[RMDB]
RNA sequence: GGGAACGACUCGAGUAGAGUCGAAAAGAUAUGGAGAGCCGUUGAAAUGUGAACUACGCGAGUCGGAAACGACUCCGCACAUGGAGGCUCUCCUAAGUCAAAAGCCGUACGGUUCGCCGUACGGCAACAAGUAAAUCAACUUCGGUUGAUUUACUUGAAAAGAAACAACAACAACAAC
Reactivity to 2A3 in 0.01 (KOAc 150mM, MgCl2 10mM, bicine 150mM(pH8.5), 24C), signal-to-noise 3, nucleotides 027 to 126: g000a020u090a030u110g020g010a010g010a010g010c020c040g060u200u060g030a040a060a010u010g020u000g020a140a140c160u180a050c300g050c180g030a000g010u000c010g000g020a040a060a000c010g000a010c000u000c010c000g020c000a010c000a000u010g000g020a030g010g000c000u000c000u000c000c000u010a000a000g000u000c000a000a020a030a160g000c000c000g000u000a000c000g000g090u030u050c240g050c130c000g020u010a010c000g000g000c000a000a000
Reactivity to DMS in 0.01 (KOAc 150mM, MgCl2 10mM, bicine 150mM(pH8.5), 24C), signal-to-noise 5, nucleotides 027 to 126: g010a050u000a300u010g010g000a020g010a010g020c000c010g010u000u010g010a190a100a010u000g000u000g010a110a110c180u000a210c080g010c180g000a010g010u000c000g000g000a070a090a170c010g000a010c000u000c000c010g010c000a010c000a010u000g000g000a090g010g000c000u000c000u000c000c000u000a000a050g000u000c030a090a100a130a120g010c000c000g000u000a000c000g010g000u000u010c200g020c000c000g010u000a000c000g000g020c000a000a020